The record gives the reactivity of an RNA of 177 nucleotides to 2A3. The 2A3 profile rests on 823 reads. 2A3 adducts were read by reverse transcription with SuperScript II with manganese. The RNA was probed in 150 mM KOAc, 10 mM MgCl2 and 150 mM bicine (pH 8.5) at 24 C.

[RMDB]
RNA sequence: GGGAACGACUCGAGUAGAGUCGAAAACGCUGUCGACGCCUUCACUGGCUUCGCCGGCUUCGCUGGCCGGCACGGGUGUCCUGUCGGUCAGAAGCGCCCCAGUCGGCAGCGGAGGCAGAGCGAGCUCGCCGCAGUGAGCCUUCGGGCUCACUGCGGCAAAAGAAACAACAACAACAAC
Reactivity to 2A3 in 0.01 (KOAc 150mM, MgCl2 10mM, bicine 150mM(pH8.5), 24C), signal-to-noise 2, nucleotides 027 to 126: c010g000c000u000g000u030c010g040a000c020g050c000c020u160u080c120a090c300u140g050g000c000u020u020c030g000c000c040g000g000c020u000u000c020g000c040u030g060g030c000c000g030g020c010a020c200g000g020g040u210g100u250c000c000u070g080u140c020g050g090u060c000a000g020a000a020g000c030g050c000c050c010c030a020g040u000c000g000g040c000a000g000c000g000g010a000g000g000c020a030g000a010g100c050g000a000g020c010u010c160